[RMDB]
RNA sequence: GGGAACGACUCGAGUAGAGUCGAAAAGAGAAAUCUGCUAUCCCCUAAUGGAUCUGAAUCCACACUUAAAUUCAGUUAUAUGGGCAUCAUCAGUUGAAAUUACAAGGGUAGAUGCAGUUCUCCAGCCUCACCUAGAUGUGUUCGCACAUCUAGGUGAAAAAGAAACAACAACAACAAC
Reactivity to DMS in 0.01 (KOAc 150mM, MgCl2 10mM, bicine 150mM(pH8.5), 24C), signal-to-noise 3, nucleotides 027 to 126: g000a030g010a050a020a070u000c030u010g000c010u010a210u000c000c010c000c100u000a050a060u000g010g010a100u000c000u000g040a050a090u000c020c020a040c070a040c200u000u030a030a080a160u000u010c180a100g010u010u000a080u010a110u010g000g000g010c230a050u000c190a060u000c000a010g030u030u020g000a150a050a020u000u010a090c160a150a090g000g000g010u010a050g010a070u000g020c040a010g000u000u000c000u010c010c040a170g000c020c030
Reactivity to 2A3 in 0.01 (KOAc 150mM, MgCl2 10mM, bicine 150mM(pH8.5), 24C), signal-to-noise 2, nucleotides 027 to 126: g020a000g000a010a050a050u110c020u010g010c020u040a030u110c020c010c000c000u050a080a050u030g010g000a000u000c010u020g000a030a020u000c030c000a010c020a020c040u100u190a060a190a190u300u120c030a000g010u020u030a090u010a040u160g020g010g080c060a120u090c020a020u010c000a100g000u150u060g030a020a050a050u080u050a050c090a030a040g000g000g040u080a030g040a100u210g030c000a010g000u000u000c000u000c000c010a040g070c000c000
This 177-nucleotide RNA was probed chemically with DMS and 2A3.
Reactivities are given for positions 27 through 126.
It was measured as part of the RMDB library OK2TRN.
Conditions: 150 mM KOAc, 10 mM MgCl2 and 150 mM bicine (pH 8.5), 24 C.
The 2A3 profile rests on 1,427 reads.